[RMDB]
RNA sequence: GGGAACGACUCGAGUAGAGUCGAAAAGGGGUCUGUCAUGUCGGGCGCACCAGAUUAAGUUUUACGCACCUGUUGCGAAGAUUCCACAGCUUGAGCUGGAGGCGGAUGCACCUGGGCCGCUACUGAAGGGAUGUUCGUUUAUCGAGUAGGCUUCCACGCUGAAAACAGUUUUCGAACUGUUUUCAGCAAAAGAAACAACAACAACAAC
Reactivity to 2A3 in 0.01 (KOAc 150mM, MgCl2 10mM, bicine 150mM(pH8.5), 24C), signal-to-noise 1, nucleotides 027 to 156: g010g000g000g000u010c030u040g070u100c050a110u080g010u000c030g000g010g050c100g000c030a020c020c010a030g020a110u120u100a080a010g060u050u020u090u150a030c020g000c010a130c000c070u220g060u220u030g020c020g030a060a010g050a110u220u090c030c020a100c000a030g010c020u030u200g050a060g020c000u020g000g040a060g060g030c020g040g000a030u050g060c040a010c020c040u000g000g030g000c010c010g040c060u080a050c010u110g120a000a090g040g000g030a010u030g020u030u010c010g020u010u020u010a050u060c030g020a020g000u040a020g010g070c000u000u000c030c010a030c050
The record gives the reactivity of an RNA of 207 nucleotides to 2A3.
It was measured as part of the RMDB library OK3TST.